[RMDB]
Structure probing data (DMS and 2A3) for a 177-nucleotide construct. Values cover nucleotides 27 to 126. DMS adducts were read by reverse transcription with MarathonRT.

RNA sequence: GGGAACGACUCGAGUAGAGUCGAAAAACGUUACGCCUGGGUGGCGCUGGUACCAACGGCCUGGCUGCUGAUUUGUACCCUGACCGCAGGCUGGCAGAAAGCGUUUAGCCCGGAUGCGAAAGUCGGCCGUACAGCUCAUGUUCGCAUGAGCUGUACGAAAAGAAACAACAACAACAAC
Reactivity to DMS in 0.01 (KOAc 150mM, MgCl2 10mM, bicine 150mM(pH8.5), 24C), signal-to-noise 2, nucleotides 027 to 126: a060c020g020u000u010a150c120g020c010c010u000g010g010g010u000g010g000c030g020c060u010g020g000u000a100c090c090a080a140c060g000g000c000c020u020g000g010c050u020g020c030u010g010a130u000u010u030g010u020a060c110c060c040u000g000a080c140c070g020c050a070g010g010c040u000g020g010c100a070g010a100a130a030g030c010g010u000u000u000a150g020c000c000c000g000g000a120u000g040c020g020a090a130a100g000u010c070g000g020c140
Reactivity to 2A3 in 0.01 (KOAc 150mM, MgCl2 10mM, bicine 150mM(pH8.5), 24C), signal-to-noise 2, nucleotides 027 to 126: a000c010g010u030u020a040c040g040c000c010u050g020g010g000u040g030g010c030g000c020u030g050g070u080a100c030c010a050a030c010g010g000c040c010u080g070g030c130u190g000c010u010g090a270u020u030u100g030u100a070c000c000c010u050g030a070c020c000g020c030a030g000g000c020u030g000g010c040a030g190a060a120a010g000c010g000u020u070u080a030g000c000c000c030g020g000a060u160g020c050g060a030a010a020g110u110c040g070g040c020
As a SHAPE reagent, 2A3 marks flexible, mostly unpaired nucleotides at the ribose 2'-OH. For 2A3 the reverse transcriptase was SuperScript II with manganese. The reactions ran in a buffer of 150 mM KOAc, 10 mM MgCl2 and 150 mM bicine (pH 8.5), at 24 C.